Chemical mapping of a 177-nucleotide RNA with 2A3. Conditions: 150 mM KOAc, 10 mM MgCl2 and 150 mM bicine (pH 8.5), 24 C. Reactivities are given for positions 27 through 126. 2A3 adducts were read by reverse transcription with SuperScript II with manganese.

[RMDB]
RNA sequence: GGGAACGACUCGAGUAGAGUCGAAAAUAAGAUACCGAUCCUCAUUCAGCCAUUUGGAAUAGUCCUCUGUAAUGAGAUAGCCAUUCUCUUUAGCCCAAUCAUAAAAUCCAGUACCUGGGAAUGGUACGAUCCCGAGGUGAUUCGUCACCUCGGGAUCAAAAGAAACAACAACAACAAC
Reactivity to 2A3 in 0.01 (KOAc 150mM, MgCl2 10mM, bicine 150mM(pH8.5), 24C), signal-to-noise 2, nucleotides 027 to 126: u090a020a000g110a040u040a140c000c050g000a020u090c000c050u000c000a060u050u000c030a020g010c080c000a200u190u230u250g070g000a070a100u070a120g100u060c010c010u020c050u090g110u160a030a080u110g000a000g010a010u040a020g030c000c000a030u120u050c020u050c000u040u080u190a030g000c130c000c000a060a080u220c070a190u010a220a110a020a030u050c040c030a010g030u030a030c000c030u000g100g110g110a090a050u130g000g000u030a020c020